RNA sequence: GGGAACGACUCGAGUAGAGUCGAAAAGCGGUUGGCCACCACCAGCGGCGCGUCGAAGGCGACCAGGCAAUCGCCCACAACGUAGGGCCGCAGCGCCGCCAGCACGGAGGCAUCGUCGCGAGCGGCAGAUACUAUGGGACUUCGGUCCCAUAGUAUCAAAAGAAACAACAACAACAAC
Reactivity to 2A3 in 0.01 (KOAc 150mM, MgCl2 10mM, bicine 150mM(pH8.5), 24C), signal-to-noise 2, nucleotides 027 to 126: g030c030g000g060u060u050g090g000c040c000a030c030c020a010c000c010a040g020c000g030g000c020g000c040g060u040c010g050a090a010g030g000c010g010a050c020c070a060g060g080c070a030a070u080c030g010c010c010c000a090c030a120a070c050g100u100a110g060g110g000c000c000g010c010a010g020c020g010c000c000g000c000c010a020g000c040a000c060g070g040a050g130g000c040a080u120c050g070u030c050g000c010g030a020g010c030g030g000c020a020
Reactivity to DMS in 0.01 (KOAc 150mM, MgCl2 10mM, bicine 150mM(pH8.5), 24C), signal-to-noise 4, nucleotides 027 to 126: g010c030g000g000u000u000g010g010c020c010a120c030c040a100c090c070a120g000c020g010g030c010g010c000g030u000c060g020a170a170g010g020c020g000a040c030c050a100g000g020c090a110a170u000c080g010c010c000c030a170c300a140a040c090g010u010a110g010g020g010c020c010g020c020a160g000c070g000c010c010g020c010c050a140g030c040a060c100g010g020a140g020g000c100a080u010c030g010u000c030g020c040g000a210g020c020g010g000c050a150